An RNA of 177 nucleotides, treated with DMS and read out base by base. Reactivities are given for positions 27 through 126. DMS adducts were read by reverse transcription with MarathonRT. The reactions ran in a buffer of 150 mM KOAc, 10 mM MgCl2 and 150 mM bicine (pH 8.5), at 24 C.
RNA sequence: GGGAACGACUCGAGUAGAGUCGAAAACACAAGGGUUUGUGGUGGUCAAUGGCAAAGUUUCUACACUUGUCAAACAAGUGUUAGACUUGCUUAAUAAGGGUAUGCAACUUUUGCAUACAAAGGUCUCGCUACAGAUACGGUUCGCCGUAUCUGUAGCAAAAGAAACAACAACAACAAC
Reactivity to DMS in 0.01 (KOAc 150mM, MgCl2 10mM, bicine 150mM(pH8.5), 24C), signal-to-noise 1, nucleotides 027 to 126: c100a070c140a110a080g020g020g020u000u000u000g010u030g040g030u000g000g030u000c060a110a090u000g010g030c020a010a010a050g050u000u000u000c060u100a000c020a000c000u000u010g000u000c280a060a060a300c000a000a000g000u000g000u000u000a030g000a010c030u000u000g010c030u000u000a090a070u090a070a080g010g010g030u000a000u000g010c000a000a220c260u000u090u000u000g050c000a000u000a060c120a040a070a070g000g020u030c050u000c090